[RMDB]
RNA sequence: GGGAACGACUCGAGUAGAGUCGAAAAGAUAUGGAUAGGACCUUGGCAAUGAUGUCGGAAACGAUUGAGCCAGGUCACUAUCCUAAGUCAAAAUCAUCGUCGCGAGGUUCGCCUCGCGACGAUGAAACUAAGAAAGACUGUUCGCAGUCUUUCUUAGAAAAGAAACAACAACAACAAC
Reactivity to DMS in 0.01 (KOAc 150mM, MgCl2 10mM, bicine 150mM(pH8.5), 24C), signal-to-noise 2, nucleotides 027 to 126: g010a030u000a300u020g000g000a030u020a010g010g000a000c000c000u010u020g030g010c000a140a130u020g000a110u010g010u000c010g000g020a090a120a230c000g000a000u000u000g000a170g000c000c000a040g000g000u000c000a000c000u000a010u000c000c000u000a020a100g000u010c040a050a070a130a130u010c000a010u010c020g000u010c000g040c000g000a030g000g000u000u010c280g010c020c020u010c000g050c000g000a000c000g000a010u010g000a010a040a120
Reactivity to 2A3 in 0.01 (KOAc 150mM, MgCl2 10mM, bicine 150mM(pH8.5), 24C), signal-to-noise 2, nucleotides 027 to 126: g010a020u060a020u140g020g000a000u000a010g020g000a020c040c060u160u300g040g000c090a210a300u210g040a030u120g060u000c000g010g050a080a090a120c020g010a010u000u050g020a000g010c000c010a000g020g000u000c000a000c000u000a000u000c000c000u000a060a020g050u000c020a050a000a030a300u040c000a000u000c010g000u050c010g020c040g050a020g090g040u160u200c300g130c120c010u000c070g030c000g020a000c040g010a000u000g000a000a000a010
Chemical mapping of a 177-nucleotide RNA with DMS and 2A3.
The data come from the RNA Mapping Database (RMDB), library TTRDEL.
Values cover nucleotides 27 to 126.
The DMS profile rests on 1,877 reads.
For 2A3 the reverse transcriptase was SuperScript II with manganese.